Structure probing data (2A3 and DMS) for a 177-nucleotide construct.
The RNA was probed in 150 mM KOAc, 10 mM MgCl2 and 150 mM bicine (pH 8.5) at 24 C.
The 2A3 profile rests on 1,156 reads.

RNA sequence: GGGAACGACUCGAGUAGAGUCGAAAAGGCGGAGCAGGGAUACUUUGGCCGGUUUCAUCUACUCCGCCUCUAAGUCCAAAUAAACAGGAUGUUGGUUUCUUUGAGGCUUUAGCACGAAUUCUCUCAUGUAGUCUAUAAAGUUCGCUUUAUAGACUACAAAAGAAACAACAACAACAAC
Reactivity to 2A3 in 0.01 (KOAc 150mM, MgCl2 10mM, bicine 150mM(pH8.5), 24C), signal-to-noise 1, nucleotides 027 to 126: g000g020c000g010g000a010g010c030a030g000g000g040a020u000a030c010u130u040u050g060g000c040c020g090g040u030u010u000c020a080u000c020u020a010c020u030c020c000g010c020c000u000c000u030a000a010g020u060c010c000a040a120a030u090a050a060a030c080a030g210g000a120u090g120u060u000g090g060u010u020u050c050u020u050u080g030a020g030g000c030u070u100u090a060g010c050a020c160g020a050a040u070u000c100u010c010u000c030a000u040
Reactivity to DMS in 0.01 (KOAc 150mM, MgCl2 10mM, bicine 150mM(pH8.5), 24C), signal-to-noise 1, nucleotides 027 to 126: g000g000c000g000g000a010g000c010a020g000g020g000a020u000a020c020u000u020u020g030g030c170c190g010g010u000u000u000c000a060u000c010u000a040c000u000c010c020g000c010c010u000c010u010a040a080g000u010c010c010a090a080a130u020a050a070a060c160a080g000g020a120u000g010u010u010g030g030u000u000u000c030u000u000u010g010a100g020g010c020u000u010u010a050g010c140a110c140g010a030a060u010u000c040u000c010u000c100a140u010